[RMDB]
RNA sequence: GGGAACGACUCGAGUAGAGUCGAAAAUAAAUUUUGUGACCACAUGGUCAAGGCUGGUUUAGUCGGUGUGCUCACACUAGACAACCAGGACCUUAAUGGCAAGUGGUAUGAUUUUGGUGACUUCGUAGAGCCGACCUGUUCGCAGGUCGGAAAAGAAACAACAACAACAAC
Reactivity to DMS in 0.01 (KOAc 150mM, MgCl2 10mM, bicine 150mM(pH8.5), 24C), signal-to-noise 5, nucleotides 027 to 129: u050a050a060a050u010u000u020u020g050u010g050a050c020c010a040c030a070u080g060g000u020c030a000a030g030g040c010u010g010g040u000u010u090a120g050u010c010g020g000u020g040u020g030c170u070c300a100c020a020c020u030a080g050a030c040a090a040c020c000a000g010g010a090c040c030u060u030a060a130u040g000g060c060a040a010g000u020g010g010u030a090u060g020a070u000u060u050u040g070g000u020g030a040c120u000u000c140g010u010a160g010a070g020
Reactivity to 2A3 in 0.01 (KOAc 150mM, MgCl2 10mM, bicine 150mM(pH8.5), 24C), signal-to-noise 4, nucleotides 027 to 129: u030a030a010a000u110u120u030u050g100u110g080a010c000c000a000c000a050u240g100g000u030c030a000a000g000g000c000u010g000g020u000u050u090a050g000u000c020g000g030u000g000u060g060c070u090c120a030c010a010c000u040a090g000a010c000a020a010c000c000a000g040g000a030c000c000u060u100a130a080u140g020g000c000a100a120g030u000g000g030u050a070u120g060a090u020u090u140u050g050g010u070g020a030c010u050u120c130g030u050a030g010a010g130
This 170-nucleotide RNA was probed chemically with DMS and 2A3. The data come from the RNA Mapping Database (RMDB), library 15KLIB. For 2A3, 6,301 sequencing reads were counted.